Chemical mapping of a 207-nucleotide RNA with DMS and 2A3. Conditions: 150 mM KOAc, 10 mM MgCl2 and 150 mM bicine (pH 8.5), 24 C. It was measured as part of the RMDB library RNAMAK. For DMS the reverse transcriptase was MarathonRT.
RNA sequence: GGGAACGACUCGAGUAGAGUCGAAAACCGUAGGUUUCGUUAAUAGGCUUGGAUUUAUAGGGCGACUAUAUUCGAAAGAGUAUAGAGUCCCUAUUGUCAGCCUAUAUACGAAACCUAAACGGAAAUCGUAUUGGUUACUUCGGUAACCAAUACGAAACUAUCUAUUGCCCUUCGGGGCAAUAGAUAGAAAAGAAACAACAACAACAAC
Reactivity to DMS in 0.01 (KOAc 150mM, MgCl2 10mM, bicine 150mM(pH8.5), 24C), signal-to-noise 1, nucleotides 027 to 156: c000c000g020u000a030g020g000u010u000u000c000g020u000u010a200a060u000a000g000g000c000u020u010g030g000a060u000u000u000a020u000a030g000g000g010c000g060a120c000u010a010u010a010u010u010c010g010a230a200a300g000a010g020u000a010u000a010g000a210g000u000c000c000c010u000a000u010u000g010u010c010a070g000c010c000u000a010u000a080u020a030c080g020a010a010a020c000c000u000a000a020a080c020g010g000a090a030a090u000c010g040u000a000u000u000g040g010u000u000a010c010u010u000c300g060g000u010a010a010c020c000a000a000u000a000c000g040a010a100a110
Reactivity to 2A3 in 0.01 (KOAc 150mM, MgCl2 10mM, bicine 150mM(pH8.5), 24C), signal-to-noise 3, nucleotides 027 to 156: c000c000g000u010a020g000g000u000u000u000c010g000u020u050a080a010u000a030g010g000c030u070u220g210g020a060u270u300u140a020u050a010g020g000g000c010g020a080c010u000a000u010a000u000u020c010g030a120a100a070g000a060g010u020a000u010a010g020a010g110u300c000c020c000u010a010u000u000g010u000c000a000g000c000c000u000a000u000a000u000a010c000g000a000a000a000c000c000u000a010a020a000c020g050g050a060a110a100u030c000g000u000a000u000u000g000g000u000u000a000c000u040u050c250g140g000u010a000a000c000c030a000a000u010a000c000g000a000a000a000